[RMDB]
RNA sequence: GGGAACGACUCGAGUAGAGUCGAAAAUCAAUGCAGCGGUGGCGGUGGCCCUGGGUUGGCCCUUGUAUUGCCAGAUCAACAGGUCCGCGUAGCUCAUCGCACAAUGACCUGAAGAUCAUUCAUUGCAUCACUACUGCGGAUUCGUCCGCAGUAGUGAAAAAGAAACAACAACAACAAC
Reactivity to DMS in 0.01 (KOAc 150mM, MgCl2 10mM, bicine 150mM(pH8.5), 24C), signal-to-noise 2, nucleotides 027 to 126: u070c040a130a040u060g000c070a070g010c030g080g090u010g020g100c000g000g000u030g040g010c110c000c010u040g000g030g000u000u000g000g000c000c110c190u090u030g000u060a030u030u000g020c000c070a090g000a100u010c050a020a300c010a010g020g000u050c010c060g000c070g000u000a130g000c000u040c150a110u010c250g030c000a040c070a060a300u000g000a000c000c020u000g010a070a160g020a040u020c030a220u060u070c040a010u040u020g000c060a190
Reactivity to 2A3 in 0.01 (KOAc 150mM, MgCl2 10mM, bicine 150mM(pH8.5), 24C), signal-to-noise 3, nucleotides 027 to 126: u140c010a000a090u170g120c040a010g030c020g050g030u030g060g000c040g070g000u070g000g100c040c010c000u090g000g000g050u020u060g010g000c010c070c030u150u170g100u110a190u100u180g030c030c000a040g020a090u000c010a020a070c000a000g000g050u000c040c050g010c030g060u090a030g010c000u010c030a110u060c070g050c040a080c000a020a090u070g000a010c010c000u030g040a030a010g090a070u040c030a020u060u080c020a010u000u110g010c060a040

Structure probing data (DMS and 2A3) for a 177-nucleotide construct.
Source: RMDB library OK1LIB, as collected in RNAgym.
The reactions ran in a buffer of 150 mM KOAc, 10 mM MgCl2 and 150 mM bicine (pH 8.5), at 24 C.
The DMS profile rests on 1,772 reads.